[RMDB]
RNA sequence: GGGAACGACUCGAGUAGAGUCGAAAAAACUUGGAGAACGUGUACGCCAAGCUAUCUUAAACACUGUUAAAUUUUGUGACCACAUGGUCAAGGCUGGUUUAGUCGGUGUGCUCACACUAGACAACCACACGUUACACUUGUUCGCAAGUGUAACGUGAAAAGAAACAACAACAACAAC
Reactivity to DMS in 0.01 (KOAc 150mM, MgCl2 10mM, bicine 150mM(pH8.5), 24C), signal-to-noise 1, nucleotides 027 to 126: a100a070c000u000u000g020g000a120g010a110a050c090g000u000g000u000a050c170g000c000c000a020a050g000c090u000a080u010c050u000u010a080a120a080c100a010c120u000g000u000u000a090a010a210u000u000u000u000g010u000g030a030c000c010a160c290a050u000g000g000u000c000a060a020g000g030c050u010g010g000u010u010u000a070g030u000c000g000g000u000g000u000g000c110u000c220a020c010a010c010u000a090g010a030c010a010a010c030c060a170
Reactivity to 2A3 in 0.01 (KOAc 150mM, MgCl2 10mM, bicine 150mM(pH8.5), 24C), signal-to-noise 1, nucleotides 027 to 126: a000a000c060u060u030g040g030a130g040a090a010c010g050u010g000u160a010c010g000c010c000a010a010g000c000u050a050u120c060u050u120a090a120a000c030a020c060u070g040u160u070a090a090a200u180u140u120u080g090u030g030a000c020c000a070c090a240u220g000g000u010c000a000a010g130g030c040u030g000g020u080u000u070a020g000u000c040g000g000u010g000u060g030c000u050c050a010c000a000c000u040a080g010a010c000a010a000c000c000a010